Annotation:
An RNA of 207 nucleotides, treated with 2A3 and read out base by base. It was measured as part of the RMDB library M2RFPK. The RNA was probed in 150 mM KOAc, 10 mM MgCl2 and 150 mM bicine (pH 8.5) at 24 C.
RNA sequence: GGGAACGACUCGAGUAGAGUCGAAAAGAUCUGCGCCGAUCCGAAACGCUAGCAAACAGCCCGCAUCAUGUCGUCUCCUAACUUCGACGUGGUGAAAUACUGAGCUUAUGCGAGUAAGCCUGUUAACAAUAGAUCAGAACGUUCGCGUUCUGAUCAACGUCGAAGUUAUCUUCGGAUAACUUCGACGAAAAGAAACAACAACAACAAC
Reactivity to 2A3 in 0.01 (KOAc 150mM, MgCl2 10mM, bicine 150mM(pH8.5), 24C), signal-to-noise 1, nucleotides 027 to 156: g020a090u050c020u120g030c080g020c030c030g040a090u040c050c030g030a000a060a000c040g010c040u060a060g010c110a200a140a000c000a050g050c010c000c030g010c000a020u010c000a000u040g030u000c000g020u000c040u080c170c070u090a120a170c100u070u030c020g030a050c010g000u030g030g000u010g030a060a000a000u130a010c010u000g020a030g020c000u030u030a010u080g060c000g040a020g130u000a010a010g010c000c020u060g030u080u180a110a080c060a120a070u070a170g000a010u010c000a020g020a000a000c000g030u030u110c190g000c010g100u000u010c010u000g020a000u000c000a000a000